[RMDB]
RNA sequence: GGGAACGACUCGAGUAGAGUCGAAAACUCGGCAAGAGGCGGCAGUCCUCAGUACUCUUACUCUUUCCUAUAAAGAGGAGACUGCUGGACUCGCCGCCCGAGCCCGAGCAUGGGCCCCAGUUCCGAAUCCUUCUUAAGGGUUCGCCCUUAAGAAGGAAAAAGAAACAACAACAACAAC
Reactivity to DMS in 0.01 (KOAc 150mM, MgCl2 10mM, bicine 150mM(pH8.5), 24C), signal-to-noise 1, nucleotides 027 to 126: c000u000c020g000g010c020a300a220g000a060g000g000c010g020g020c040a030g000u000c000c000u000c020a030g000u000a080c030u000c060u000u020a300c050u000c000u000u000u000c190c230u000a080u040a100a000a010g010a030g020g000a030g000a020c010u000g010c220u000g000g000a040c000u000c190g040c030c010g000c000c000c000g000a150g010c230c000c010g010a020g040c080a080u000g010g030g000c040c000c000c170a130g020u010u000c040c020g010a080a120